RNA sequence: GGGAACGACUCGAGUAGAGUCGAAAAGAACGCCAAGAGGCGAGACCGAGACCGACAAUCACGCUAUCUCGGAAAAGUGGAAUAGCGUCAGGAGUCCACUAUCGGAAAAGCCGAAAGAACGGCAGAAAUAGUACCCAUCAUUCGUGAUGGGUACUAUAAAAGAAACAACAACAACAAC
Reactivity to 2A3 in 0.01 (KOAc 150mM, MgCl2 10mM, bicine 150mM(pH8.5), 24C), signal-to-noise 5, nucleotides 027 to 126: g040a030a010c070g020c030c000a100a060g070a080g110g000c050g010a010g080a020c000c000g000a000g000a000c000c010g010a000c010a050a070u050c010a010c010g020c000u010a020u000c030u010c040g150g080a090a150a050a080g220u240g050g000a080a030u000a010g000c000g010u010c030a050g000g150a010g020u020c020c000a040c050u010a000u020c010g020g000a040a090a010a000g010c010c000g010a040a030a000g120a040a020c040g000g000c000a000g120a040a190
Reactivity to DMS in 0.01 (KOAc 150mM, MgCl2 10mM, bicine 150mM(pH8.5), 24C), signal-to-noise 6, nucleotides 027 to 126: g020a150a150c120g030c000c000a080a110g010a300g020g030c010g010a080g030a300c010c020g000a020g000a120c250c170g000a030c030a080a240u030c230a030c000g000c000u000a010u000c040u000c000g020g000a050a030a100a120g020u030g000g000a020a000u000a010g010c010g000u000c170a120g030g020a300g010u000c000c010a000c040u000a060u010c010g000g000a020a130a140a190g000c000c000g000a110a140a110g000a110a070c120g000g040c030a080g000a070a060

Structure probing data (2A3 and DMS) for a 177-nucleotide construct. For 2A3 the reverse transcriptase was SuperScript II with manganese. The reactions ran in a buffer of 150 mM KOAc, 10 mM MgCl2 and 150 mM bicine (pH 8.5), at 24 C. The 2A3 profile rests on 6,642 reads. DMS adducts were read by reverse transcription with MarathonRT.